Chemical mapping of a 177-nucleotide RNA with DMS and 2A3.
As a SHAPE reagent, 2A3 marks flexible, mostly unpaired nucleotides at the ribose 2'-OH.
For DMS, 1,266 sequencing reads were counted.
For DMS the reverse transcriptase was MarathonRT.
Conditions: 150 mM KOAc, 10 mM MgCl2 and 150 mM bicine (pH 8.5), 24 C.
Source: RMDB library RFMREP, as collected in RNAgym.

RNA sequence: GGGAACGACUCGAGUAGAGUCGAAAACGGUAAGGUGAGGAAAGUCCGGGCUCCACGGAAAUACGGUGCCGGAUAACGUCCGGCGGGGGCGACCCCAGGGAAAGUGCCACAGAGAGCAAACCGCCAUUGAAUAGAAGAUGUUCGCAUCUUCUAUUCAAAAAGAAACAACAACAACAAC
Reactivity to DMS in 0.01 (KOAc 150mM, MgCl2 10mM, bicine 150mM(pH8.5), 24C), signal-to-noise 2, nucleotides 027 to 126: c050g010g010u000a060a070g000g000u000g010a080g020g000a110a110a130g020u000c050c050g020g000g000c080u010c020c060a110c050g000g000a070a070a060u030a060c110g040g030u000g040c020c030g000g000a050u000a110a070c150g000u000c010c020g010g000c020g040g000g000g000g000c190g010a190c030c000c010c020a100g010g000g000a010a110a110g000u000g030c030c020a080c090a100g000a070g000a030g000c050a030a100a110c050c050g020c070c060a130u000
Reactivity to 2A3 in 0.01 (KOAc 150mM, MgCl2 10mM, bicine 150mM(pH8.5), 24C), signal-to-noise 1, nucleotides 027 to 126: c020g000g030u060a010a090g000g060u040g100a020g000g080a140a040a000g040u000c030c000g000g050g020c010u010c030c020a040c080g040g080a140a130a000u180a090c030g010g000u040g050c000c030g000g000a020u030a070a050c060g080u010c000c020g040g000c010g000g010g000g010g000c000g020a060c020c000c010c000a020g040g000g020a050a110a070g060u050g000c030c020a030c000a030g130a000g000a000g030c000a020a070a010c050c010g070c040c020a080u030